[RMDB]
RNA sequence: GGGAACGACUCGAGUAGAGUCGAAAAAUUGGACAAUCCGCAGCCAAGCUCCCUCAUGGGAAGAAGGUUCAGAGACUAGAUGGUUGUGGGUUGAACACACGUUUAAUUGAAACAGUUCAGCUUAAGAUAUAGUCCAAUCCAGUGUGGAAACGCACUGCACAGGCAGUCUGUUCGCAGACUGCCUGUGAAAAGAAACAACAACAACAAC
Reactivity to 2A3 in 0.01 (KOAc 150mM, MgCl2 10mM, bicine 150mM(pH8.5), 24C), signal-to-noise 1, nucleotides 027 to 156: a000u000u010g000g000a010c040a040a000u010c000c000g000c000a020g010c000c000a070a020g060c020u000c020c060c000u130c120a190u250g120g000g080a020a100g020a040a000g070g000u160u300c090a020g020a000g000a210c040u020a110g070a300u090g000g000u000u000g000u010g000g000g010u000u000g000a000a000c030a000c010a000c100g000u000u000u110a190a300u100u170g020a010a010a010c000a010g000u000u020c030a020g000c000u050u130a060a000g070a020u040a000u200a220g020u000c000c000a000a000u080c050c000a000g000u020g000u000g020g020a000a010a010c000g000c000a000c000u000g000

The record gives the reactivity of an RNA of 207 nucleotides to 2A3. The RNA was probed in 150 mM KOAc, 10 mM MgCl2 and 150 mM bicine (pH 8.5) at 24 C. As a SHAPE reagent, 2A3 marks flexible, mostly unpaired nucleotides at the ribose 2'-OH. The data come from the RNA Mapping Database (RMDB), library ARCHII.